RNA sequence: GGGAACGACUCGAGUAGAGUCGAAAAACGCGGGACAGCUUACCAGGCCCGACGGCCGGACGAGUGUUGUACACGAUAGGUCGAAGAGUGGUGCAUGGCCGUUACGACGAGUGAGGUGACUUUUGGGAAGCAAAGGUGAAUUCGUUCACCUUUGCUUAAAAGAAACAACAACAACAAC
Reactivity to 2A3 in 0.01 (KOAc 150mM, MgCl2 10mM, bicine 150mM(pH8.5), 24C), signal-to-noise 1, nucleotides 027 to 126: a000c040g010c010g040g000g000a060c010a020g020c000u000u000a050c000c020a080g050g040c000c020c000g020a030c020g000g000c020c020g000g050a030c070g030a050g010u050g080u080u140g070u080a040c030a000c050g120a100u100a080g130g000u050c020g070a090a050g030a010g040u080g020g000u050g000c020a040u040g050g000c000c010g030u040u070a040c060g040a020c010g000a010g050u090g010a070g000g030u030g040a030c030u070u060u090u160g020g010g080
Reactivity to DMS in 0.01 (KOAc 150mM, MgCl2 10mM, bicine 150mM(pH8.5), 24C), signal-to-noise 4, nucleotides 027 to 126: a060c100g000c040g010g020g020a050c080a080g020c020u020u020a100c050c020a130g000g000c030c010c030g010a180c080g010g000c020c020g010g000a080c130g000a150g020u010g030u000u020g000u010a140c030a100c040g000a110u030a100g020g000u000c020g000a100a080g020a140g030u010g000g000u020g000c060a060u010g000g010c010c030g010u010u010a070c050g010a060c060g000a070g000u010g000a060g000g010u000g000a120c080u000u020u020u010g000g000g050